The record gives the reactivity of an RNA of 207 nucleotides to DMS and 2A3.
For 2A3, 7,646 sequencing reads were counted.
The reactions ran in a buffer of 150 mM KOAc, 10 mM MgCl2 and 150 mM bicine (pH 8.5), at 24 C.
For DMS, 6,958 sequencing reads were counted.
[RMDB]
RNA sequence: GGGAACGACUCGAGUAGAGUCGAAAAUCCGACGAGCUGAACGCUUUCGAAGGAAAGCUUGACCAGCUAAUCUUCUGCAACGCCAUUACGAGGACUGCCCUUAGAGGCUCAUGGCGAUAGGUCGCCCAAAACUAUUUGAGGUUCGCCUCAAAUAGAACACAUGUACUACGUUCGCGUAGUACAUGUGAAAAGAAACAACAACAACAAC
Reactivity to DMS in 0.01 (KOAc 150mM, MgCl2 10mM, bicine 150mM(pH8.5), 24C), signal-to-noise 3, nucleotides 027 to 156: u000c030c040g020a120c040g000a070g020c000u000g000a060a140c210g000c010u000u000u000c000g000a300a170g000g000a050a050a010g010c010u000u000g020a160c110c030a060g000c010u010a040a110u000c030u000u000c040u000g000c020a070a150c030g010c020c020a070u000u010a140c070g020a140g000g020a100c080u000g000c010c000c010u000u000a100g000a150g020g020c010u010c070a050u000g000g030c020g010a090u000a050g000g010u000c020g000c010c000c040a020a040a060a190c020u000a000u000u010u000g010a010g000g050u000u000c300g040c000c000u000c010a000a020a000u000a010g000a100a240
Reactivity to 2A3 in 0.01 (KOAc 150mM, MgCl2 10mM, bicine 150mM(pH8.5), 24C), signal-to-noise 6, nucleotides 027 to 156: u050c020c010g010a040c030g020a020g000c010u020g030a120a040c070g000c000u040u030u010c040g090a110a070g170g010a030a020a000g000c000u100u110g070a080c040c010a000g000c000u030a100a060u060c080u150u030c040u100g030c030a070a040c020g000c020c010a050u080u140a070c110g030a070g040g060a080c060u090g010c020c000c000u050u120a090g030a120g120g000c000u020c030a020u040g010g000c000g020a030u080a060g020g010u020c010g030c020c010c000a020a100a040a050c000u000a000u000u010u000g000a000g000g050u050u120c200g100c040c000u000c000a000a000a000u000a000g010a030a000